Chemical mapping of a 170-nucleotide RNA with 2A3 and DMS. The data come from the RNA Mapping Database (RMDB), library 15KLIB. 2A3 adducts were read by reverse transcription with SuperScript II with manganese. The reactions ran in a buffer of 150 mM KOAc, 10 mM MgCl2 and 150 mM bicine (pH 8.5), at 24 C. DMS adducts were read by reverse transcription with MarathonRT.
[RMDB]
RNA sequence: GGGAACGACUCGAGUAGAGUCGAAAAGUGGGGGGCGACCGGAACGAGGAGAAAAGUAAAGAGAGCAACGGGGCUAGCGAGUGGAUGUUCCGCCUCCCCGGGGAGCCGAGUGAGGCUUAUCCCGGAGAUAGGACCCUGUUCGCAGGGUCCAAAAGAAACAACAACAACAAC
Reactivity to 2A3 in 0.01 (KOAc 150mM, MgCl2 10mM, bicine 150mM(pH8.5), 24C), signal-to-noise 3, nucleotides 027 to 129: g070u100g000g000g000g000g000g000c020g020a050c010c000g000g050a030a050c000g010a000g000g040a050g020a020a060a000a000g100u150a010a050a030g060a000g000a010g010c040a000a050c050g030g000g050g010c010u030a000g030c020g020a030g000u050g010g020a090u120g050u100u020c020c010g010c000c000u030c010c000c000c020g030g000g000g000a000g000c000c000g030a060g110u300g090a090g010g000c020u000u040a100u140c010c000c010g010g000a020g000a000u130a030
Reactivity to DMS in 0.01 (KOAc 150mM, MgCl2 10mM, bicine 150mM(pH8.5), 24C), signal-to-noise 2, nucleotides 027 to 129: g040u000g000g030g010g020g000g020c080g040a030c030c060g000g000a080a050c110g020a090g040g020a040g020a050a000a050a130g000u030a030a050a030g020a100g010a190g000c060a090a040c140g030g030g060g060c120u020a070g020c100g000a060g030u060g000g030a000u020g010u020u020c050c020g030c080c020u030c010c050c060c060g020g030g000g020a040g030c060c000g030a220g050u100g040a120g000g050c030u000u000a070u020c000c020c000g030g000a080g020a090u040a070